[RMDB]
RNA sequence: GGGAACGACUCGAGUAGAGUCGAAAAAAAAAAAGAUAUGGAUUCGAUAAGUAGGGAGAACAACAGCUGCGUCGGAAACGACGCAGACAUGUUCGAACUACUUUUGACGAAUCCUAAGUCAAAAAAACAGUGAAGUUUAGUUCGCUAAACUUCACUGAAAAGAAACAACAACAACAAC
Reactivity to DMS in 0.01 (KOAc 150mM, MgCl2 10mM, bicine 150mM(pH8.5), 24C), signal-to-noise 1, nucleotides 027 to 126: a000a000a020a090a170a130a030g000a090u020a300u000g000g010a000u000u000c020g000a170u000a010a000g030u000a010g000g000g000a300g010a010a000c030a060a090c270a180g000c040u000g000c000g010u000c010g010g000a100a110a260c020g000a010c000g000c000a000g000a010c130a050u000g010u000u010c000g000a300a300c000u000a000c000u000u000u000u000g000a170c120g000a010a010u000c000c000u030a070a070g000u050c010a000a000a050a130a030a100a260